[RMDB]
RNA sequence: GGGAACGACUCGAGUAGAGUCGAAAACAGGAUGGGCCCGCGGCUUAUCAGCUUGUUGGUGGGGUAAUGGCCUACCAAGGCGACGACGGGUAGCCGACCUGAGAGGGUGACCGGCCACACUGGGAGGAAUAUAUUUGAAAUUCGUUUCAAAUAUAUUAAAAGAAACAACAACAACAAC
Reactivity to DMS in 0.01 (KOAc 150mM, MgCl2 10mM, bicine 150mM(pH8.5), 24C), signal-to-noise 1, nucleotides 027 to 126: c030a000g000g000a070u020g000g000g000c010c010c030g000c040g020g020c090u000u010a060u020c100a120g000c010u000u030g000u020u010g010g010u000g020g010g010g020u000a140a090u030g020g010c010c000u000a010c020c010a010a110g000g000c000g000a070c080g000a100c050g000g010g000u010a080g010c010c010g000a090c020c000u010g000a190g010a120g020g000g000u000g000a300c170c000g000g000c000c060a240c300a260c120u000g000g000g000a300g000g000
Reactivity to 2A3 in 0.01 (KOAc 150mM, MgCl2 10mM, bicine 150mM(pH8.5), 24C), signal-to-noise 2, nucleotides 027 to 126: c020a000g030g030a060u100g010g020g000c000c000c010g010c000g010g000c030u060u080a040u160c050a040g020c010u100u300g050u050u010g010g000u010g000g000g000g010u010a010a020u020g010g000c000c000u010a000c010c010a090a190g000g000c020g000a030c010g030a070c010g000g010g020u020a040g080c010c000g020a040c010c000u020g020a060g030a020g040g030g000u070g030a190c010c000g000g000c000c000a140c000a020c050u140g000g020g060a150g000g070
This 177-nucleotide RNA was probed chemically with DMS and 2A3. The RNA was probed in 150 mM KOAc, 10 mM MgCl2 and 150 mM bicine (pH 8.5) at 24 C. The 2A3 profile rests on 2,415 reads. 2A3 adducts were read by reverse transcription with SuperScript II with manganese.